[RMDB]
RNA sequence: GGGAACGACUCGAGUAGAGUCGAAAAGCUAGCCUGCGCACGAUCUGACUGCCGUGAAGUCUAGCCUGCGUCAGAACGAGUCUCCAUCAAUCAAAGCGCAGGGAUUGAUGUACGAGACUAGUACACAGUGUAUUGAGUUGUUCGCAGCUCGAUACACAAAAGAAACAACAACAACAAC
Reactivity to DMS in 0.01 (KOAc 150mM, MgCl2 10mM, bicine 150mM(pH8.5), 24C), signal-to-noise 9, nucleotides 027 to 126: g000c030u010a040g010c010c010u000g020c020g020c010a180c110g010a070u020c050u000g000a080c050u010g010c060c030g010u000g000a080a090g010u010c020u000a050g010c020c030u000g010c060g000u010c060a090g010a080a060c110g000a040g000u000c010u000c010c010a020u000c010a010a020u000c010a060a080a080g010c010g010c000a020g000g010g010a000u000u000g010a020u000g010u060a100c190g000a020g000a010c010u000a060g010u010a080c120a080c190a110
Reactivity to 2A3 in 0.01 (KOAc 150mM, MgCl2 10mM, bicine 150mM(pH8.5), 24C), signal-to-noise 9, nucleotides 027 to 126: g040c030u030a010g010c000c010u010g000c010g000c010a040c060g050a070u040c030u080g080a060c030u060g040c020c010g050u050g070a080a010g060u010c020u030a020g010c000c010u040g020c020g080u070c050a040g040a100a040c050g020a030g000u000c000u000c010c000a010u000c000a000a010u000c010a040a070a050g010c020g000c010a000g000g000g000a000u000u000g000a000u000g020u060a070c070g000a000g000a000c000u010a020g060u070a040c100a020c040a070